Chemical mapping of a 207-nucleotide RNA with 2A3. For 2A3 the reverse transcriptase was SuperScript II with manganese. The 2A3 profile rests on 1,130 reads. The data come from the RNA Mapping Database (RMDB), library M2RFPK. Values cover nucleotides 27 to 156. Conditions: 150 mM KOAc, 10 mM MgCl2 and 150 mM bicine (pH 8.5), 24 C.
RNA sequence: GGGAACGACUCGAGUAGAGUCGAAAAAGCAUACCAGAUCGUACGCGAGCUGGUAUGCAAAAAUUGGUGUAGCCUUACCGUAGUAGGCACAAAAACGUCAGCUGGAUCUACGGAUCCAGCUGACGAAAAAAGUGUUUUGUGUUCGCACAAAACACAACGAUAAGGUUUUGUUCGCAAAACCUUAUCGAAAAGAAACAACAACAACAAC
Reactivity to 2A3 in 0.01 (KOAc 150mM, MgCl2 10mM, bicine 150mM(pH8.5), 24C), signal-to-noise 1, nucleotides 027 to 156: a000g020c000a040u000a000c000c000a010g000a000u020c000g000u020a000c200g010c000g110a020g050c000u000g000g010u000a000u000g010c000a010a010a010a010a010u110u150g030g010u050g140u190a000g010c000c000u000u000a000c010c050g020u020a000g020u000a000g000g040c030a020c020a030a060a010a020a010c020g000u000c000a000g000c010u020g000g000a010u000c000u050a070c230g110g000a000u020c000c020a000g000c000u000g000a000c000g000a000a000a000a000a020a010g000u020g000u000u000u000u000g020u000g020u010u030c130g000c060a000c010a000a000a000a000c000a000c000a010a040